[RMDB]
RNA sequence: GGGAACGACUCGAGUAGAGUCGAAAAGAUUCUAUGUUCGCAUAGAAUCAAAGAACGCCGAAGCCCAGAGCGCAAGAUGGAGGAGACGGCGAACCACCAAAAAAACAGCGGUCUUCGGACCGCUGAAUCAUACUUUGCAGUUCGCUGCAAAGUAUGAAAAAGAAACAACAACAACAAC
Reactivity to DMS in 0.01 (KOAc 150mM, MgCl2 10mM, bicine 150mM(pH8.5), 24C), signal-to-noise 1, nucleotides 027 to 126: g000a030u000u000c000u000a060u010g010u000u060c300g000c000a010u000a030g000a000a000u000c010a060a090a060g010a130a160c030g020c040c000g000a090a080g000c010c040c030a110g000a180g030c090g010c180a100a080g010a050u000g010g000a120g030g040a120g010a270c100g000g000c000g000a100a220c060c030a090c060c040a000a000a060a110a090a190a210c040a000g000c010g010g000u000c000u000u030c180g060g000a010c000c000g010c000u000g000a030a030
This 177-nucleotide RNA was probed chemically with DMS. It was measured as part of the RMDB library M2PK50. The RNA was probed in 150 mM KOAc, 10 mM MgCl2 and 150 mM bicine (pH 8.5) at 24 C. DMS adducts were read by reverse transcription with MarathonRT.